[RMDB]
The data come from the RNA Mapping Database (RMDB), library OK3TST. Structure probing data (2A3) for a 207-nucleotide construct. As a SHAPE reagent, 2A3 marks flexible, mostly unpaired nucleotides at the ribose 2'-OH.

RNA sequence: GGGAACGACUCGAGUAGAGUCGAAAAUGCUGUUACAGCUCUGCAGAAGCGAUACGCUCGGGCAGUACUGUUGGGCGCGCGCCCGCAACAUGCUCGACGAUGCGGAUAACCUGGUUGGAAUAGCCGAACUCGUUGUCGUACCACACGUAGAGAACCACGAUGCGUUUUAGUUCGCUAAAACGCAUCGAAAAGAAACAACAACAACAAC
Reactivity to 2A3 in 0.01 (KOAc 150mM, MgCl2 10mM, bicine 150mM(pH8.5), 24C), signal-to-noise 2, nucleotides 027 to 156: u100g020c000u020g030u090u090a030c020a040g000c040u020c000u070g090c130a060g020a150a040g000c040g080a100u150a240c060g060c210u000c000g080g040g000c000a010g010u040a100c030u060g120u240u300g010g000g000c060g020c180g060c220g000c100c000c000g000c000a010a020c000a040u030g000c020u000c000g020a020c020g030a040u180g020c020g030g050a020u040a120a030c010c020u050g150g000u030u050g000g010a070a050u030a050g010c000c040g020a040a060c000u000c000g090u090u130g010u000c010g000u010a040c020c010a030c010a020c040g070u210a030g000a010g030a230a060c060c190a050

For 2A3, 963 sequencing reads were counted. The RNA was probed in 150 mM KOAc, 10 mM MgCl2 and 150 mM bicine (pH 8.5) at 24 C.